[RMDB]
RNA sequence: GGGAACGACUCGAGUAGAGUCGAAAAGGGGUUAGCGUUUGCAAAACGCUGUUAUUGCAAAGAUCUGGAUUUAGCGCAAGUAGGUCCGAAAUCCAGAUCAACAUUUCGGACCUCCGCGCUAAUAAAACUGACUGCUUUCAUUCGUGAAAGCAGUCAGAAAAGAAACAACAACAACAAC
Reactivity to DMS in 0.01 (KOAc 150mM, MgCl2 10mM, bicine 150mM(pH8.5), 24C), signal-to-noise 2, nucleotides 027 to 126: g000g000g000g020u000u010a010g000c080g000u000u010u000g030c180a090a060a020a030c020g010c060u000g010u000u000a050u020u000g010c030a020a090a140g000a080u000c050u010g000g000a160u010u000u000a020g000c010g030c000a080a120g070u020a020g010g000u010c000c000g010a000a010a020u000c090c120a180g020a090u010c160a050a060c130a050u000u000u000c000g010g000a030c000c000u000c060c120g020c010g030c000u000a000a020u000a010a100a100a180